Conditions: 150 mM KOAc, 10 mM MgCl2 and 150 mM bicine (pH 8.5), 24 C. This 177-nucleotide RNA was probed chemically with 2A3 and DMS. The 2A3 profile rests on 26,372 reads. In probing experiments dimethyl sulfate is read out at A N1 and C N3, which are open when not base-paired.

RNA sequence: GGGAACGACUCGAGUAGAGUCGAAAAGAUAUGGACAACUGCGAAGUUGAACUACGUCCAAUGUCGGAAACGACAUUAGGACGCAAUGGAGUUGUCCUAAGUCAAACAAGGAACUUCGGUUCCUUGAGUAUGCUGUUAAGUUCGCUUAACAGCAUACAAAAGAAACAACAACAACAAC
Reactivity to 2A3 in 0.01 (KOAc 150mM, MgCl2 10mM, bicine 150mM(pH8.5), 24C), signal-to-noise 9, nucleotides 027 to 126: g010a000u020a000u060g000g010a000c010a030a000c030u300g200c250g150a240a150g210u280u300g130a220a170c180u250a100c170g000u000c000c010a000a000u000g000u000c000g000g000a020a010a020c000g000a000c000a010u010u030a130g000g000a000c040g000c040a010a050u130g030g080a010g000u000u000g000u000c010c000u000a020a000g010u000c020a050a080a170c010a000a020g000g010a010a000c020u080u170c300g120g000u000u000c000c010u000u010g000a000
Reactivity to DMS in 0.01 (KOAc 150mM, MgCl2 10mM, bicine 150mM(pH8.5), 24C), signal-to-noise 7, nucleotides 027 to 126: g000a030u000a200u010g000g000a020c000a000a010c010u000g010c060g000a160a220g030u010u010g010a160a210c150u010a290c020g010u000c010c000a030a010u000g010u000c000g000g000a030a040a100c000g010a010c000a010u000u000a100g040g000a010c000g020c090a040a060u000g000g010a030g010u000u000g010u000c000c000u000a000a070g010u000c020a090a120a300c020a010a000g000g000a020a010c000u000u020c250g040g000u000u000c000c000u000u000g000a110